[RMDB]
RNA sequence: GGGAACGACUCGAGUAGAGUCGAAAAAUGUGCGGCAAAGAAACAUUGUUUAUGCAAAGGCACUUCGCAAUGUUUGCUCAAACAUUGCUUAUUCAAACACGCUUCACAAUGUGCGACAAAGAAACAUAAAACGUUUAGUACUUCGGUACUAAACGAACUGUAAGUCAGUGUUCGCACUGACUUACAGAAAAGAAACAACAACAACAAC
Reactivity to DMS in 0.01 (KOAc 150mM, MgCl2 10mM, bicine 150mM(pH8.5), 24C), signal-to-noise 3, nucleotides 027 to 156: a120u000g030u000g040c050g050g000c100a110a060a140g020a160a050a070c020a050u000u000g000u000u010u000a070u010g000c040a030a050a130g000g030c040a080c100u010u010c110g030c020a030a020u000g060u010u000u010g010c160u000c100a070a050a030c040a030u010u020g020c030u000u000a010u000u000c060a100a090a090c050a070c110g020c060u000u010c100a090c060a090a070u000g010u010g000c030g010a200c120a000a090a120g010a140a120a040c040a070u000a040a020a070a130c020g000u000u000u000a020g020u000a010c000u010u000c300g050g020u010a010c010u010a010a010a000c020g020a000a080
Reactivity to 2A3 in 0.01 (KOAc 150mM, MgCl2 10mM, bicine 150mM(pH8.5), 24C), signal-to-noise 7, nucleotides 027 to 156: a000u120g020u080g110c030g040g020c070a070a070a090g090a060a170a020c030a050u030u040g030u060u140u090a100u110g020c030a040a080a100g100g010c030a020c050u080u050c080g000c000a000a000u010g010u020u020u060g120c110u180c180a010a000a000c000a000u000u000g000c000u040u080a110u100u120c040a020a070a030c060a020c100g010c020u060u060c050a000c020a060a020u040g010u030g050c000g040a020c050a020a140a000g140a060a120a010c050a040u130a110a040a010a020c010g000u000u000u000a000g000u000a010c010u010u050c160g050g000u000a000c000u000a000a000a000c000g000a020a010

Source information
An RNA of 207 nucleotides, treated with DMS and 2A3 and read out base by base. The DMS profile rests on 5,478 reads. The RNA was probed in 150 mM KOAc, 10 mM MgCl2 and 150 mM bicine (pH 8.5) at 24 C. For 2A3 the reverse transcriptase was SuperScript II with manganese. The data come from the RNA Mapping Database (RMDB), library M2RFPK. DMS adducts were read by reverse transcription with MarathonRT.